[RMDB]
RNA sequence: GGGAACGACUCGAGUAGAGUCGAAAAUAAAAUCGUAGGGCGAGACGAUCGACGUAAAUCGCUCAAACUACUCGAGACCAAAGGAAUACGCUUCGGUAACUCGCUGUAAUCCCGAGCGAUAAAUGAAGUAUUCCUAUUCAUUCGUGAAUAGGAAUACAAAAGAAACAACAACAACAAC
Reactivity to 2A3 in 0.01 (KOAc 150mM, MgCl2 10mM, bicine 150mM(pH8.5), 24C), signal-to-noise 5, nucleotides 027 to 126: u070a010a040a000a040u040c020g010u030a080g020g000g030c010g000a020g040a060c020g030a080u100c080g110a110c040g060u060a010a040a120u040c020g010c010u010c040a010a050a010c010u010a000c010u010c010g010a030g010a040c030c000a060a050a010g110g040a130a090u120a130c050g010c070u050u070c010g000g020u030a080a060c020u010c040g060c060u070g050u110a040a070u050c000c020c020g020a010g000c010g020a030u080a110a090a060u160g090a090a020
Reactivity to DMS in 0.01 (KOAc 150mM, MgCl2 10mM, bicine 150mM(pH8.5), 24C), signal-to-noise 5, nucleotides 027 to 126: u010a080a110a110a080u000c030g020u000a110g000g000g010c080g010a040g010a070c030g000a100u000c080g010a110c110g010u000a020a060a070u000c020g000c040u000c050a080a140a160c060u000a010c010u010c020g000a010g010a110c030c050a060a060a080g000g000a160a090u000a060c090g000c020u000u000c080g010g010u010a070a080c090u000c010g010c060u000g010u000a050a120u010c090c010c020g000a020g010c010g010a040u000a040a060a100u020g000a120a100